The record gives the reactivity of an RNA of 207 nucleotides to DMS and 2A3. Conditions: 150 mM KOAc, 10 mM MgCl2 and 150 mM bicine (pH 8.5), 24 C. DMS adducts were read by reverse transcription with MarathonRT.

RNA sequence: GGGAACGACUCGAGUAGAGUCGAAAAUGACUACAUUACCAGUGUUUCUAUUGUAGAAUUUUAGCCGUGGAGAUCAUUCAGUUCAAACUCACCCCUCCCUCCCAUAAAUCAUACAAAUGUAGAAACUGAGACCCCAUGAGUUUGUGACUUGACCAAAACUAGUAUUACUAUUCGUAGUAAUACUAGUAAAAGAAACAACAACAACAAC
Reactivity to DMS in 0.01 (KOAc 150mM, MgCl2 10mM, bicine 150mM(pH8.5), 24C), signal-to-noise 2, nucleotides 027 to 156: u020g020a250c020u000a070c040a030u000u000a060c050c040a260g000u010g000u000u000u010c030u000a100u000u010g030u000a050g010a080a090u000u000u000u000a090g010c040c050g020u000g000g010a100g020a090u000c010a050u010u000c020a110g010u000u000c050a080a010a070c010u010c020a110c070c010c000c000u000c020c020c000u010c000c000c010a100u010a040a050a150u000c060a110u000a150c110a100a080a050u010g010u000a090g010a060a030a070c040u000g000a130g020a050c020c010c000c040a190u000g010a110g010u010u000u010g020u010g020a070c050u000u000g010a160c060c030a030a060a130
Reactivity to 2A3 in 0.01 (KOAc 150mM, MgCl2 10mM, bicine 150mM(pH8.5), 24C), signal-to-noise 2, nucleotides 027 to 156: u150g020a020c020u030a000c040a030u040u080a120c080c070a070g040u010g070u040u030u020c090u060a110u100u130g020u030a070g010a150a040u050u070u080u150a050g060c000c040g010u050g000g040a060g000a060u050c010a070u110u150c030a010g010u020u020c030a050a020a080c020u010c050a040c000c030c020c000u000c000c000c000u020c000c010c010a000u030a040a100a020u090c020a000u030a150c030a070a040a010u050g020u050a090g030a090a090a020c040u020g000a030g030a090c030c000c000c000a020u040g000a020g040u000u030u030g030u050g010a030c000u030u090g040a020c020c040a040a080a000